The record gives the reactivity of an RNA of 207 nucleotides to 2A3. The reactions ran in a buffer of 150 mM KOAc, 10 mM MgCl2 and 150 mM bicine (pH 8.5), at 24 C. 2A3 adducts were read by reverse transcription with SuperScript II with manganese.

RNA sequence: GGGAACGACUCGAGUAGAGUCGAAAAUUAUAUACCAGUCUAUAACCCUCAAUAGUUCUACAUCAGAGGGCUAAAACUGAGAUUAAAACUCAGAUGUCUGGCUCUUUCCAAGAUAGUACAUUGCCUUUUAAUCUGGUAUCUUUUAUUAAACAUGCCAGAGUGAUAGUAGGUUCGCCUACUAUCACUCAAAAGAAACAACAACAACAAC
Reactivity to 2A3 in 0.01 (KOAc 150mM, MgCl2 10mM, bicine 150mM(pH8.5), 24C), signal-to-noise 1, nucleotides 027 to 156: u110u080a180u020a020u020a150c000c000a000g020u010c050u050a020u070a160a160c000c000c030u000c040a010a000u030a120g000u150u030c070u020a070c000a120u130c020a020g000a000g020g000g000c000u000a000a000a000a000c000u000g020a000g000a000u190u170a080a130a000a000c020u010c020a000g110a160u100g100u030c080u030g010g000c000u000c000u030u030u000c030c020a050a000g000a020u030a030g040u030a010c010a140u000u130g140c000c000u060u250u200u300a070a040u300c020u030g000g000u000a000u000c020u140u180u100u060a170u250u190a210a090a020c060a200u160g180c120c070a040